[RMDB]
About this RNA:
Chemical mapping of a 207-nucleotide RNA with DMS and 2A3. Values are in units of 0.01, from 0 to 300, in steps of 10. For 2A3, 3,657 sequencing reads were counted. Values cover nucleotides 27 to 156. The reactions ran in a buffer of 150 mM KOAc, 10 mM MgCl2 and 150 mM bicine (pH 8.5), at 24 C. Source: RMDB library OK3TST, as collected in RNAgym.

RNA sequence: GGGAACGACUCGAGUAGAGUCGAAAAUCUGUUCGUACACACAACUUGUUAGUAAGUAGUUAUUUAGGAAUGAAUUAAAAAUCUUUUUCGUUCAAUCUCUGUGUAUGAUAUUUCCAAAUGGCUAUUAACUUAUUAGGACAUAAAUACUUAUUAAGUAACCAUACGUAUAGUUCGCUAUACGUAUGGUAAAAGAAACAACAACAACAAC
Reactivity to DMS in 0.01 (KOAc 150mM, MgCl2 10mM, bicine 150mM(pH8.5), 24C), signal-to-noise 3, nucleotides 027 to 156: u010c080u000g000u030u000c040g020u010a030c030a060c030a090c090a100a110c070u000u000g010u000u000a140g040u000a060a080g010u000a040g020u000u000a080u000u010u000a100g020g010a030a060u010g000a060a100u000u020a000a050a090a140a120u000c050u000u000u010u010u000c030g020u000u010c040a130a140u000c050u010c050u000g010u000g010u010a030u000g000a080u010a040u010u000u000c020c010a010a050a090u000g000g000c030u000a070u000u000a090a070c010u000u000a050u000u000a060g010g000a220c050a140u010a040a080a090u000a060c020u000u010a080u000u000a010a070g010u000a140
Reactivity to 2A3 in 0.01 (KOAc 150mM, MgCl2 10mM, bicine 150mM(pH8.5), 24C), signal-to-noise 5, nucleotides 027 to 156: u050c020u060g080u020u050c020g050u060a010c010a010c020a000c000a060a160c070u040u110g030u100u090a070g020u030a120a030g010u030a010g010u040u070a070u080u050u090a060g000g020a020a010u050g020a040a030u090u160a100a100a110a120a160u120c090u080u070u010u020u030c010g020u040u040c020a100a100u020c090u000c040u140g040u010g010u060a030u030g010a010u020a100u060u030u000c010c000a000a020a030u020g030g000c010u000a020u120u070a120a010c010u030u020a020u030u050a030g020g030a020c020a030u130a070a170a020u090a070c020u060u070a060u140u070a130a030g020u010a060